[RMDB]
RNA sequence: GGGAACGACUCGAGUAGAGUCGAAAAGUUAGGCGAGGCUCCUAUACAAACACAGGUCGCUGAUCUGACGACGUCGAGAGACGCCCAAGAUUAGGACAGGAUAUAUCGAACCAAGGUAUAUCCCCAUAAAACUCGGAACACUUCGGUGUUCCGAGAACAUAUGUUGCGCGUUCGCGCGCAACAUAUGAAAAGAAACAACAACAACAAC
Reactivity to DMS in 0.01 (KOAc 150mM, MgCl2 10mM, bicine 150mM(pH8.5), 24C), signal-to-noise 1, nucleotides 027 to 156: g020u000u000a000g000g120c050g000a300g050g020c020u010c000c000u000a030u020a230c060a050a050a070c090a090c100a110g040g000u000c030g020c040u000g030a010u000c020u010g000a100c060g000a020c000g000u000c010g020a300g020a300g010a030c000g010c000c030c020a190a120g020a040u010u000a110g010g020a150c010a030g010g040a020u000a010u000a010u000c010g000a080a300c150c020a080a130g020g000u000a010u000a020u000c000c000c090c020a100u000a000a060a070a190c010u010c000g010g000a000a100c000a000c000u000u020c270g020g000u000g020u000u010c000c000g010a000g020a010a140
Reactivity to 2A3 in 0.01 (KOAc 150mM, MgCl2 10mM, bicine 150mM(pH8.5), 24C), signal-to-noise 3, nucleotides 027 to 156: g030u040u040a030g000g040c100g060a090g070g050c090u080c060c010u090a060u070a150c100a050a200a000c100a020c040a100g140g010u060c080g000c190u000g000a030u000c010u040g010a030c020g000a010c000g020u010c000g010a010g010a000g000a120c000g000c010c000c010a010a010g030a040u040u050a000g010g030a010c030a050g010g000a000u000a010u010a000u000c020g020a090a090c060c050a180a010g000g000u000a000u000a000u010c000c010c010c000a110u230a090a160a060a040c010u000c000g010g000a000a000c000a000c020u040u090c220g040g000u000g000u000u000c000c000g000a000g000a010a000